[RMDB]
RNA sequence: GGGAACGACUCGAGUAGAGUCGAAAAGAAUGAUCCUGUAGUCCAAGAAUGUUGGUUCUGAGCUCUGAACUAAGGAAUCUGGGAGCUGCCAACCCAGAGGUUUACUCCUUAUCUAUGGAGCAUAGGUGAACCCCUGGCCCAUUUCUUGGAACAGCAAACCGAUAGUAAUGUUCGCAUUACUAUCGGUAAAAGAAACAACAACAACAAC
Reactivity to 2A3 in 0.01 (KOAc 150mM, MgCl2 10mM, bicine 150mM(pH8.5), 24C), signal-to-noise 3, nucleotides 027 to 156: g140a050a100u190g010a030u070c010c010u010g020u110a090g100u000c000c000a000a000g010a000a010u050g000u120u100g100g000u190u060c110u150g090a030g030c010u000c020u060g100a100a090c020u060a060a070g070g010a090a040u040c020u080g000g050g000a020g060c090u100g050c050c030a040a040c020c010c010a010g010a010g030g000u070u120u110a030c040u040c020c000u070u070a060u070c080u050a140u240g070g010a010g020c030a050u140a040g080g030u070g080a070a060c000c000c000c030u050g050g000c000c050c000a010u070u070u000c010u010u000g000g010a020a010c000a000g030c020a140a060
Reactivity to DMS in 0.01 (KOAc 150mM, MgCl2 10mM, bicine 150mM(pH8.5), 24C), signal-to-noise 2, nucleotides 027 to 156: g010a120a060u030g000a120u000c030c020u000g010u000a120g040u010c040c020a040a080g010a030a060u000g020u000u010g030g020u000u000c030u010g000a150g020c020u000c020u000g010a050a150c050u000a060a110g020g020a080a130u000c050u000g000g010g000a150g010c020u000g020c060c050a070a130c000c000c000a040g010a050g010g020u000u010u000a050c070u010c020c000u000u000a070u000c130u000a100u000g040g020a050g000c060a070u010a070g020g010u010g000a040a080c040c000c000c040u000g000g020c180c040c050a090u000u000u000c020u010u000g000g010a060a060c020a090g000c010a080a220